[RMDB]
RNA sequence: GGGAACGACUCGAGUAGAGUCGAAAAUUACAUAAGUCUAACACCUUGUUUCGGACUAACAAGGGCGAAUGGAGGAUGGCCGAACCUCCAUAGUUAGACGUCCGAGAACCAGCCGAAAUGAAAAAGAACCUAAUGGCCUAUUCGUAGGCCAUUAGGUAAAAGAAACAACAACAACAAC
Reactivity to DMS in 0.01 (KOAc 150mM, MgCl2 10mM, bicine 150mM(pH8.5), 24C), signal-to-noise 2, nucleotides 027 to 126: u070u070a080c130a050u010a040a230g000u000c000u010a020a020c000a140c000c000u050u000g010u000u000u000c160g000g000a110c080u000a070a020c040a030a000g010g000g020c250g050a120a100u000g010g000a010g020g040a200u030g000g000c020c010g010a080a230c000c010u010c020c000a000u000a020g040u020u020a020g000a050c010g000u020c080c070g000a040g010a060a090c090c080a070g000c070c010g000a030a030a040u020g010a080a040a050a110a110g000a200
Reactivity to 2A3 in 0.01 (KOAc 150mM, MgCl2 10mM, bicine 150mM(pH8.5), 24C), signal-to-noise 3, nucleotides 027 to 126: u150u160a060c050a060u200a150a040g000u000c000u020a010a000c010a020c000c000u000u010g030u050u130u110c150g100g090a060c070u030a010a010c020a010a010g080g000g000c060g140a070a000u030g000g000a000g020g010a010u100g080g000c030c000g040a040a030c000c000u000c000c000a000u000a010g010u000u000a010g000a000c000g000u000c020c030g080a070g040a070a000c030c020a000g030c000c000g060a120a060a040u110g120a020a030a050a090a000g080a030